[RMDB]
RNA sequence: GGGAACGACUCGAGUAGAGUCGAAAAAUUGAGGAGUUUGCUGACGUAGUAAAGGAACAAGUCUCAGACUUGCUUGUUAAAUUACUGCGUGGAAUGCCGAUUCCAGAUUUUGAUUUAGACGAUUUUAAGAGCAUCACCUUCGGGUGAUGCAAAAGAAACAACAACAACAAC
Reactivity to 2A3 in 0.01 (KOAc 150mM, MgCl2 10mM, bicine 150mM(pH8.5), 24C), signal-to-noise 3, nucleotides 027 to 129: a000u030u030g070a120g010g010a000g000u000u000u020g000c010u000g010a010c000g000u000a030g020u000a000a020a010g060g070a030a000c000a000a000g050u030c060u020c130a050g020a170c050u060u090g010c000u000u000g030u040u060a040a020a030u020u000a000c000u000g000c020g000u010g000g070a130a060u090g010c000c000g000a000u000u010c000c000a000g000a060u000u010u000u060g100a110u030u040u050a050g020a050c080g050a100u060u120u000u130a090a040g060a000
Reactivity to DMS in 0.01 (KOAc 150mM, MgCl2 10mM, bicine 150mM(pH8.5), 24C), signal-to-noise 4, nucleotides 027 to 129: a000u040u090g010a050g050g000a040g010u000u030u020g020c010u000g020a050c010g020u010a070g010u020a000a080a070g010g000a110a020c010a060a000g000u050c110u110c290a130g020a120c150u070u030g020c050u000u050g040u000u000a010a060a130u030u000a020c010u050g020c000g000u020g050g030a180a050u100g040c020c060g040a050u020u000c020c030a300g010a040u070u000u020u020g000a130u000u080u030a160g000a130c130g030a180u000u000u000u000a100a000g020a110